[RMDB]
RNA sequence: GGGAACGACUCGAGUAGAGUCGAAAAGAGCUGUAGUACAGCAAGAAGCACGCGAUCCUUGGCACCGCGUGCAAGAUAAUUACGCCGGCAAAGAAGGAAAGCCGGCAUAAGUGCCAAGUAAGAGAGAACGUAGGACUGAUUUCGAUCAGUCCUACGUAAAAGAAACAACAACAACAAC
Reactivity to DMS in 0.01 (KOAc 150mM, MgCl2 10mM, bicine 150mM(pH8.5), 24C), signal-to-noise 1, nucleotides 027 to 126: g000a140g000c000u000g000u020a030g120u000a300c000a060g000c010a110a000g000a060a120g000c000a000c090g000c030g000a140u030c090c000u000u010g040g000c010a020c000c000g010c030g220u000g010c000a040a040g000a120u060a160a040u000u000a040c120g000c020c010g030g000c000a070a100a020g020a270a140g000g040a090a150a190g000c000c000g000g060c010a000u000a010a090g000u000g000c000c000a000a040g000u060a030a050g000a190g000a290g000a090
Reactivity to 2A3 in 0.01 (KOAc 150mM, MgCl2 10mM, bicine 150mM(pH8.5), 24C), signal-to-noise 1, nucleotides 027 to 126: g140a000g000c030u030g000u090a100g020u110a130c010a000g020c000a000a060g120a050a000g010c000a000c030g020c000g040a080u050c000c000u000u000g000g000c020a000c000c020g000c000g000u000g000c000a000a000g040a010u090a020a090u200u030a010c130g000c000c000g020g000c010a130a000a070g060a160a000g100g030a090a120a000g000c000c060g010g020c000a000u010a000a000g000u000g020c000c050a000a000g040u080a070a020g120a000g000a000g030a090
About this RNA:
The record gives the reactivity of an RNA of 177 nucleotides to DMS and 2A3. For 2A3, 1,659 sequencing reads were counted. High DMS reactivity at an A or C suggests that its Watson-Crick edge is free. The reactions ran in a buffer of 150 mM KOAc, 10 mM MgCl2 and 150 mM bicine (pH 8.5), at 24 C. 2A3 adducts were read by reverse transcription with SuperScript II with manganese.